Chemical mapping of a 177-nucleotide RNA with DMS and 2A3. For DMS, 1,398 sequencing reads were counted. High 2A3 reactivity points to a flexible backbone, as in loops and unpaired stretches. 2A3 adducts were read by reverse transcription with SuperScript II with manganese. It was measured as part of the RMDB library TTRDES. Conditions: 150 mM KOAc, 10 mM MgCl2 and 150 mM bicine (pH 8.5), 24 C.
[RMDB]
RNA sequence: GGGAACGACUCGAGUAGAGUCGAAAAGAUAUGGAUGACGUCGAAGCAAGGCUGGUAAUCGGAAACGAUUACCCAGCUGAUGACCUUCGAGCGUCAUCCUAAGUCAAAACGCUGGUUCGCCAGCGAACCAGGCCUCAAAGUUCGCUUUGAGGCCUGGAAAAGAAACAACAACAACAAC
Reactivity to DMS in 0.01 (KOAc 150mM, MgCl2 10mM, bicine 150mM(pH8.5), 24C), signal-to-noise 2, nucleotides 027 to 126: g000a040u020a300u010g010g010a040u000g000a020c000g030u000c000g000a010a010g000c070a120a110g000g040c010u000g020g000u000a000a020u000c000g030g010a150a050a220c000g000a000u000u000a020c160c090c060a000g000c000u000g020a070u000g020a040c300c000u000u000c000g000a060g000c010g010u000c000a020u010c010c000u010a000a110g000u000c050a050a080a100a190c030g010c020u000g000g010u010u050c250g030c010c010a040g000c020g010a000a080
Reactivity to 2A3 in 0.01 (KOAc 150mM, MgCl2 10mM, bicine 150mM(pH8.5), 24C), signal-to-noise 1, nucleotides 027 to 126: g020a010u110a030u120g030g000a010u010g000a000c000g020u040c010g030a000a010g020c060a060a300g040g000c000u000g000g010u010a000a000u000c010g030g000a020a060a070c010g000a010u000u010a040c060c000c000a000g060c000u000g090a130u110g060a040c000c040u000u030c010g070a120g180c020g000u040c000a010u000c000c000u000a000a010g010u020c040a000a000a140a110c040g000c010u030g050g090u050u030c160g130c110c000a030g000c000g000a010a010